[RMDB]
RNA sequence: GGGAACGACUCGAGUAGAGUCGAAAACCAGAGGAGCUGCUGGCAGUGUUGCCCAUGCUCAUGUACGUCCUAAAGGGCCGGAAAGAACACAUGGCCACUUUCGUUCCUCUGAUUGCCCUGGAGGCCCCUACGCUCGCUAUUUCGAUAGCGAGCGUAGAAAAGAAACAACAACAACAAC
Reactivity to DMS in 0.01 (KOAc 150mM, MgCl2 10mM, bicine 150mM(pH8.5), 24C), signal-to-noise 1, nucleotides 027 to 126: c020c010a040g010a060g000g010a010g010c000u010g030c290u010g020g060c010a080g030u000g000u000u000g010c070c010c070a060u000g000c040u000c030a070u000g000u010a110c130g000u010c050c010u000a050a090a090g020g010g030c000c180g010g000a040a070a100g010a080a020c080a010c010a130u000g000g000c040c020a030c030u000u000u010c180g000u010u000c000c000u000c010u000g010a100u000u000g000c030c000c000u020g010g010a140g010g000c040c000c010
Reactivity to 2A3 in 0.01 (KOAc 150mM, MgCl2 10mM, bicine 150mM(pH8.5), 24C), signal-to-noise 2, nucleotides 027 to 126: c020c000a020g030a000g020g020a010g010c060u170g000c040u120g170g000c000a030g060u050g010u250u090g090c020c030c000a070u160g020c010u020c010a000u020g030u030a030c060g110u070c000c040u180a270a210a080g080g000g000c020c030g000g120a110a150a010g120a040a010c030a010c010a120u130g090g070c050c000a020c010u090u130u100c010g050u050u030c020c000u000c000u030g000a090u030u170g050c000c000c060u020g090g100a140g040g090c000c010c000
This 177-nucleotide RNA was probed chemically with DMS and 2A3. For DMS the reverse transcriptase was MarathonRT. The 2A3 profile rests on 999 reads. In probing experiments dimethyl sulfate is read out at A N1 and C N3, which are open when not base-paired. Reactivities are given for positions 27 through 126. It was measured as part of the RMDB library OK2TRN.